[RMDB]
RNA sequence: GGGAACGACUCGAGUAGAGUCGAAAAGAUAUGGAUGAUGGAGCACGGUGUUUGUACAUCGGAAACGAUGUAUGAUACCGUGAACUACUCCAAGUCCUAAGUCAAAACGCACUCUUCGGAGUGCGAAGAUUAACAAUACCUUCGGGUAUUGUUAAUCAAAAGAAACAACAACAACAAC
Reactivity to 2A3 in 0.01 (KOAc 150mM, MgCl2 10mM, bicine 150mM(pH8.5), 24C), signal-to-noise 5, nucleotides 027 to 126: g040a020u090a030u150g010g010a010u060g020a080u300g030g000a010g000c000a000c000g000g020u020g060u050u080u240g030u010a000c010a000u000c000g010g020a040a040a020c020g000a010u000g000u010a000u000g000a000u010a000c000c000g000u000g000a000a000c010u090a040c000u000c000c000a010a010g010u000c000c000u030a170a020g080u040c040a030a020a040a120c010g000c000a010c000u010c000u050u100c300g150g000a000g000u000g000c000g000a010a000
Reactivity to DMS in 0.01 (KOAc 150mM, MgCl2 10mM, bicine 150mM(pH8.5), 24C), signal-to-noise 8, nucleotides 027 to 126: g010a050u010a300u000g000g010a030u000g010a300u010g020g020a010g010c010a010c000g010g000u000g010u000u000u010g040u000a000c000a000u010c000g000g000a100a060a210c000g020a000u000g000u000a000u000g000a010u010a010c000c000g000u000g000a020a030c060u000a300c010u000c010c020a030a300g010u000c000c000u000a070a120g010u010c050a080a050a090a220c020g010c000a010c000u000c000u000u010c200g010g000a010g010u000g000c000g000a010a040

An RNA of 177 nucleotides, treated with 2A3 and DMS and read out base by base. Conditions: 150 mM KOAc, 10 mM MgCl2 and 150 mM bicine (pH 8.5), 24 C. The data come from the RNA Mapping Database (RMDB), library TTRDEL. 2A3 adducts were read by reverse transcription with SuperScript II with manganese.